[RMDB]
RNA sequence: GGGAACGACUCGAGUAGAGUCGAAAAUGUCCCUCCAUGGUGAGCUCCAGGACCCCCAAAAGGAGGGGGGUGGGCCUUGGACCUCCAGGAGCCAUGGGAUCCGUGGAGUACCCGGGAUAUCCCUUCUAAAUCCUAGCGUUCGCGCUAGGAAAAAGAAACAACAACAACAAC
Reactivity to DMS in 0.01 (KOAc 150mM, MgCl2 10mM, bicine 150mM(pH8.5), 24C), signal-to-noise 5, nucleotides 027 to 129: u060g030u030c050c020c010u010c020c040a080u010g040g040u000g040a000g020c110u020c020c020a070g010g010a000c000c000c000c000c000a090a090a120a110g120g020a130g000g000g020g010g030g100u010g000g000g000c070c060u010u040g020g020a170c080c080u030c020c100a110g040g000a100g030c030c070a070u090g010g040g030a070u020c020c040g000u050g000g000a120g060u020a040c080c080c130g000g030g030a070u030a050u030c000c000c000u020u020c060u060a100a110a120
The data come from the RNA Mapping Database (RMDB), library 15KLIB.
Structure probing data (DMS) for a 170-nucleotide construct.
The reactions ran in a buffer of 150 mM KOAc, 10 mM MgCl2 and 150 mM bicine (pH 8.5), at 24 C.
DMS adducts were read by reverse transcription with MarathonRT.
Values are in units of 0.01, from 0 to 300, in steps of 10.